[RMDB]
RNA sequence: GGGAACGACUCGAGUAGAGUCGAAAAUGGUCCACUUCAUCAUUAAACAAAUGCUCGUCACAAUAGUGCUGACCGAACGCAUCAUUGCUGAAAAGCACUGCAUCGCCGGUGAUGUAAGUCAUCAUGCUCGUGGAUGUGAAUUCGUUCACAUCCACGAAAAAGAAACAACAACAACAAC
Reactivity to 2A3 in 0.01 (KOAc 150mM, MgCl2 10mM, bicine 150mM(pH8.5), 24C), signal-to-noise 2, nucleotides 027 to 126: u090g020g000u000c010c010a020c010u090u040c000a070u010c000a030u030u180a170a080a080c060a020a080a030u100g030c020u030c070g080u040c020a000c010a020a180u110a120g050u030g050c060u060g000a100c030c060g100a110a010c070g010c020a000u050c020a020u030u110g000c050u010g080a040a060a010a030g000c010a000c020u040g000c010a060u030c000g060c110c060g000g000u030g000a000u020g030u070a040a060g030u030c000a030u040c010a010u100g000c010
Reactivity to DMS in 0.01 (KOAc 150mM, MgCl2 10mM, bicine 150mM(pH8.5), 24C), signal-to-noise 2, nucleotides 027 to 126: u000g000g000u000c070c090a070c030u000u000c000a010u000c020a080u000u020a060a100a150c100a030a110a090u010g030c000u000c220g020u000c040a100c070a050a030u000a020g050u000g000c030u000g040a130c150c140g000a050a070c120g000c030a050u000c070a060u000u000g000c110u000g000a050a040a040a000g000c000a040c070u010g000c100a090u000c030g020c080c060g000g030u000g010a040u000g020u000a070a060g000u000c160a010u010c020a020u010g000c190
The record gives the reactivity of an RNA of 177 nucleotides to 2A3 and DMS. The reactions ran in a buffer of 150 mM KOAc, 10 mM MgCl2 and 150 mM bicine (pH 8.5), at 24 C. The data come from the RNA Mapping Database (RMDB), library OK2TRN. For DMS, 1,653 sequencing reads were counted. DMS adducts were read by reverse transcription with MarathonRT. Values are in units of 0.01, from 0 to 300, in steps of 10.